[RMDB]
Overview
Structure probing data (DMS and 2A3) for a 207-nucleotide construct. 2A3 adducts were read by reverse transcription with SuperScript II with manganese. DMS adducts were read by reverse transcription with MarathonRT. Source: RMDB library OK3TST, as collected in RNAgym.

RNA sequence: GGGAACGACUCGAGUAGAGUCGAAAAGCUGCGCCAGCGCCUGUAGGGCAUCGUUGGGGUUCAUGCCCUCGGUCGAGUCCAGGACGUGCGUAGCCUCCUGGGACAGGUACUUGCGGAACUCCUCGGGAGUCAUCUCCCGGCCCUUGUUGGCGAUGAAACCUUUAACUUUAUUCGUAAAGUUAAAGGUAAAAGAAACAACAACAACAAC
Reactivity to DMS in 0.01 (KOAc 150mM, MgCl2 10mM, bicine 150mM(pH8.5), 24C), signal-to-noise 2, nucleotides 027 to 156: g020c030u010g000c020g010c050c020a110g030c010g000c010c020u020g050u000a040g030g020g020c010a040u010c090g000u000u010g000g030g020g040u000u000c020a130u000g010c020c060c020u000c050g050g010u000c050g020a220g010u000c000c010a060g000g000a020c040g030u010g010c140g000u000a190g020c010c010u010c000c020u000g020g020g010a060c030a080g000g000u000a040c030u000u020g010c020g020g010a040a020c010u000c000c010u000c040g000g020g010a040g010u000c200a130u010c010u000c010c000c000g010g010c000c000c020u000u010g010u000u000g010g010c020g000a110u000g000a220a190
Reactivity to 2A3 in 0.01 (KOAc 150mM, MgCl2 10mM, bicine 150mM(pH8.5), 24C), signal-to-noise 4, nucleotides 027 to 156: g030c030u090g010c020g010c020c050a050g030c010g030c030c030u210g140u160a010g000g010g000c010a070u140c160g120u080u120g010g000g000g020u020u020c040a070u210g020c030c010c080u050c060g020g030u060c070g060a060g040u000c000c000a010g000g010a030c040g080u180g030c070g080u060a060g030c000c000u000c000c000u020g020g010g020a030c040a040g040g050u110a050c020u110u150g040c050g030g020a030a030c000u000c000c000u010c010g000g010g000a010g050u110c050a080u080c040u000c000c010c000g030g000c000c000c000u030u060g040u050u040g020g010c010g000a020u080g000a090a050